Chemical mapping of a 177-nucleotide RNA with DMS and 2A3. Conditions: 150 mM KOAc, 10 mM MgCl2 and 150 mM bicine (pH 8.5), 24 C. It was measured as part of the RMDB libraries RFM100 and RFMREP.
RNA sequence: GGGAACGACUCGAGUAGAGUCGAAAAGACGGUGGCGACCGCGAGACGUUGGGGAGCGUCGGUGACCGGCCGCCUCCGGAAUGCCGGACCGCAGCCCAGGGACUGCGACCGUGCGCUCGGCGAAGGACGCUAUGAAGAGGUUCGCCUCUUCAUAGCGAAAAGAAACAACAACAACAAC
Reactivity to DMS in 0.01 (KOAc 150mM, MgCl2 10mM, bicine 150mM(pH8.5), 24C), signal-to-noise 8, nucleotides 027 to 126: g000a230c010g000g000u000g010g010c000g010a030c000c000g000c000g010a000g010a010c000g010u010u010g000g020g020g060a120g010c000g010u000c000g000g010u050g020a050c300c000g000g000c020c000g010c010c010u000c000c000g000g000a090a060u030g000c010c000g000g000a130c130c000g010c010a010g000c020c020c070a180g010g010g000a180c020u000g000c020g020a060c020c020g000u020g020c020g020c060u000c050g000g010c040g010a130a110g010g010a250
Reactivity to 2A3 in 0.01 (KOAc 150mM, MgCl2 10mM, bicine 150mM(pH8.5), 24C), signal-to-noise 9, nucleotides 027 to 126: g110a000c010g000g010u010g000g000c010g000a010c000c000g010c010g000a020g000a020c020g040u130u100g090g030g030g030a050g010c000g000u000c000g070g300u020g000a020c000c000g000g000c000c000g000c000c000u000c000c000g000g010a040a020u120g010c010c000g000g020a080c100c020g000c010a010g010c010c030c040a070g090g030g010a100c010u020g010c000g030a030c000c020g050u130g020c020g000c020u030c020g050g000c050g030a060a020g100g010a030